[RMDB]
RNA sequence: GGGAACGACUCGAGUAGAGUCGAAAACUAUCUAAAUUGGAGUCAUCCGACCGUAUGGAGAAAAUUUCCGACAAGAGGUGAUCCACUGAGGGUUUGCGGAAAAAUCACCUCCAGAGGACCCCUUCAGCCACAGUAGGGUUCGCCCUACUGAAAAGAAACAACAACAACAAC
Reactivity to 2A3 in 0.01 (KOAc 150mM, MgCl2 10mM, bicine 150mM(pH8.5), 24C), signal-to-noise 9, nucleotides 027 to 129: c020u040a090u190c060u160a070a140a140u110u130g060g000a020g050u060c010a040u000c030c020g020a030c000c020g070u080a080u090g040g010a010g080a020a070a040a050u080u080u010c020c020g030a060c060a060a040g030a020g020g010u020g010a040u030c040c040a030c060u070g040a110g040g070g010u060u100u130g050c040g000g030a030a070a030a020a030u060c030a050c040c010u000c010c010a020g020a030g040g020a050c010c000c000c000u040u090c040a040g030c010c020a050
Reactivity to DMS in 0.01 (KOAc 150mM, MgCl2 10mM, bicine 150mM(pH8.5), 24C), signal-to-noise 9, nucleotides 027 to 129: c050u010a090u100c080u040a040a070a090u050u040g000g000a060g000u060c070a060u020c000c040g000a010c080c080g060u000a030u040g020g020a050g010a030a030a040a070u040u020u020c030c000g000a160c300a090a040g010a070g010g000u010g010a050u000c020c040a180c040u000g000a090g010g020g010u020u060u050g040c110g000g020a020a050a100a110a050u020c060a040c030c010u010c030c040a060g030a270g000g010a090c000c000c000c000u010u010c060a020g010c100c080a090